[RMDB]
RNA sequence: GGGAACGACUCGAGUAGAGUCGAAAAUAGGCGAACGAGAGGCCCUCUCUUGUGCGGAGUUGUCACGCUGACAGAAUUGUUAUGAUGUCCGAUUCCGGUAGCAUCGCGGCGAUGCUUUCAUAGGACAUCUUAUGAACCCAAGCGCUUCGGGGAAGCAACGAUCCGUAGUAUUCGUACUACGGAUCGUAAAAGAAACAACAACAACAAC
Reactivity to 2A3 in 0.01 (KOAc 150mM, MgCl2 10mM, bicine 150mM(pH8.5), 24C), signal-to-noise 1, nucleotides 027 to 156: u190a030g010g020c020g030a020a020c030g010a060g000a030g160g060c010c000c010u060c000u010c020u020u110g050u000g150c020g000g030a090g020u070u070g070u040c030a030c100g040c030u020g010a020c010a040g070a070a240u170u110g050u030u160a190u210g020a000u000g000u000c000c010g030a080u170u110c060c070g040g030u040a000g000c000a000u010c030g010c140g190g150c160g030a000u010g000c000u050u040u060c090a080u040a050g000g020a000c000a000u000c000u000u010a060u050g050a000a000c000c000c020a040a010g060c010g000c040u000u170c000g010g000g000g000a030a000g030c050a020
Reactivity to DMS in 0.01 (KOAc 150mM, MgCl2 10mM, bicine 150mM(pH8.5), 24C), signal-to-noise 1, nucleotides 027 to 156: u000a140g030g010c010g030a060a030c030g000a070g000a070g020g020c040c040c010u010c000u000c040u000u010g010u000g000c020g000g000a240g070u000u010g000u000c010a100c070g010c020u020g000a190c040a130g000a090a190u000u010g010u020u000a060u030g010a000u000g010u010c010c020g000a160u010u000c130c060g020g020u010a030g000c000a040u010c010g020c100g040g000c180g020a030u000g000c000u000u000u000c010a080u000a140g000g000a060c020a010u010c000u010u010a050u000g000a040a140c020c020c000a100a160g010c080g020c050u000u000c020g000g000g000g000a090a020g010c020a120